Conditions: 150 mM KOAc, 10 mM MgCl2 and 150 mM bicine (pH 8.5), 24 C. This 177-nucleotide RNA was probed chemically with 2A3 and DMS. High 2A3 reactivity points to a flexible backbone, as in loops and unpaired stretches.
[RMDB]
RNA sequence: GGGAACGACUCGAGUAGAGUCGAAAAGAUAUGGAUUCAGGCUUUUGACGCUCGACGUGUCGGAAACGACACCAAGAGCGAUAAGCCUGAUCCUAAGUCAAAACUCAAUGUCUUCGGACAUUGAGAAGAAUAGUGUUAUGUUCGCAUAACACUAUUCAAAAGAAACAACAACAACAAC
Reactivity to 2A3 in 0.01 (KOAc 150mM, MgCl2 10mM, bicine 150mM(pH8.5), 24C), signal-to-noise 9, nucleotides 027 to 126: g030a020u070a020u130g020g000a020u240u240c020a010g010g000c030u090u090u170u290g300a170c080g000c010u000c010g020a030c030g010u000g000u000c000g000g000a040a060a050c010g000a000c000a000c000c000a100a020g000a000g000c000g000a000u000a000a000g000c000c000u000g000a000u000c000c000u000a100a010g040u010c030a010a020a070a200c000u000c000a000a000u000g000u000c000u040u120c300g170g000a000c000a000u000u010g000a000g010a000a020
Reactivity to DMS in 0.01 (KOAc 150mM, MgCl2 10mM, bicine 150mM(pH8.5), 24C), signal-to-noise 9, nucleotides 027 to 126: g000a040u000a300u000g000g000a010u000u000c010a010g010g010c000u000u000u000u010g030a220c070g010c010u000c000g010a300c300g000u000g000u000c000g010g000a070a080a170c000g010a010c010a000c000c020a040a300g000a010g010c010g010a030u010a010a010g010c000c000u000g000a010u000c000c000u000a030a120g000u000c030a070a060a100a140c000u000c000a000a000u000g000u000c000u000u010c210g020g000a010c000a010u000u000g000a000g000a030a070
Record summary: Source: RMDB library TTRDEL, as collected in RNAgym.